[RMDB]
RNA sequence: GGGAACGACUCGAGUAGAGUCGAAAAAGCGCAUCUAGAGAGAUUGUACACGUUGAGGCUAGUGUGUCUCUCAACGUGAGUCUCUCUAGAUUUGGAGAGUGAGUGUGUUGAGAAGACACACUAGCACUCAACACAUACCUCACUCUCUAAACACGCAAAUACUAUCGUGGUUCGCCACGAUAGUAUUAAAAGAAACAACAACAACAAC
Reactivity to DMS in 0.01 (KOAc 150mM, MgCl2 10mM, bicine 150mM(pH8.5), 24C), signal-to-noise 2, nucleotides 027 to 156: a100g020c040g030c070a060u010c010u010a040g000a010g000a050g000a140u010u010g050u020a150c030a180c060g020u000u000g010a030g030g020c020u000a020g010u010g050u010g000u000c000u000c010u000c010a010a020c000g020u000g000a170g010u000c000u000c010u000c000u000a030g010a050u000u010u010g000g010a070g010a020g020u010g020a140g040u000g020u000g020u000u010g010a080g020a120a160g000a080c010a030c010a030c010u000a000g000c040a130c010u010c010a060a040c000a090c130a060u010a030c070c070u000c120a110c000u000c000u000c000u000a000a010a030c060a060c020g020c000a210
Reactivity to 2A3 in 0.01 (KOAc 150mM, MgCl2 10mM, bicine 150mM(pH8.5), 24C), signal-to-noise 3, nucleotides 027 to 156: a000g040c000g010c020a030u030c060u030a000g000a000g000a010g030a090u060u080g080u080a050c080a040c170g010u000u010g000a010g020g000c030u010a030g030u020g010u000g000u000c000u000c000u000c030a000a000c000g030u030g040a020g020u000c000u000c000u010c000u010a010g010a020u010u020u030g000g000a010g010a010g000u060g040a120g040u140g020u010g000u070u000g010a020g020a160a070g030a020c030a000c000a000c010u020a000g040c000a000c000u000c000a000a000c000a000c000a000u070a020c000c020u050c010a090c040u000c010u000c000u020a010a070a010c090a000c030g000c020a010

This 207-nucleotide RNA was probed chemically with DMS and 2A3. The 2A3 profile rests on 3,296 reads. The reactions ran in a buffer of 150 mM KOAc, 10 mM MgCl2 and 150 mM bicine (pH 8.5), at 24 C. For 2A3 the reverse transcriptase was SuperScript II with manganese. For DMS, 5,417 sequencing reads were counted.